This 177-nucleotide RNA was probed chemically with 2A3 and DMS. Values cover nucleotides 27 to 126. The DMS profile rests on 6,967 reads. The data come from the RNA Mapping Database (RMDB), library OK2TRN. High DMS reactivity at an A or C suggests that its Watson-Crick edge is free. For DMS the reverse transcriptase was MarathonRT. 2A3 adducts were read by reverse transcription with SuperScript II with manganese.

RNA sequence: GGGAACGACUCGAGUAGAGUCGAAAACAGAGGUUUCGCUGGGUUAUGGAAGCUUGACAGGUGAGAUACCUCAGCUACAAUAGGUUUUGAAAGUGUUACACAUUGUGGUUUAUUGUGGUCAAAUCACAUUACAAGCACGAUUCGUCGUGCUUGUAAUAAAAGAAACAACAACAACAAC
Reactivity to 2A3 in 0.01 (KOAc 150mM, MgCl2 10mM, bicine 150mM(pH8.5), 24C), signal-to-noise 2, nucleotides 027 to 126: c020a030g050a040g060g050u020u050u060c020g000c050u050g060g140g020u050u060a070u120g060g080a140a070g060c040u080u120g070a020c010a030g070g000u040g000a040g020a080u090a070c000c010u010c030a010g000c000u000a000c020a020a060u040a090g090g030u040u020u040u170g160a160a060a020g060u110g000u120u110a040c050a000c020a070u050u050g040u060g080g000u040u050u050a080u020u110g060u030g020g010u060c000a000a070a080u070c020a020c000
Reactivity to DMS in 0.01 (KOAc 150mM, MgCl2 10mM, bicine 150mM(pH8.5), 24C), signal-to-noise 5, nucleotides 027 to 126: c080a120g000a090g020g010u000u000u010c070g010c030u000g000g010g010u000u000a060u010g000g010a130a150g020c040u000u010g010a060c100a220g000g000u000g040a120g010a100u010a040c020c010u010c040a110g020c020u010a020c060a010a050u000a070g000g010u000u000u000u000g010a070a090a130g010u000g010u000u000a080c060a100c040a070u000u000g010u000g000g010u000u000u000a090u020u010g020u000g000g020u000c120a030a030a110u010c070a040c070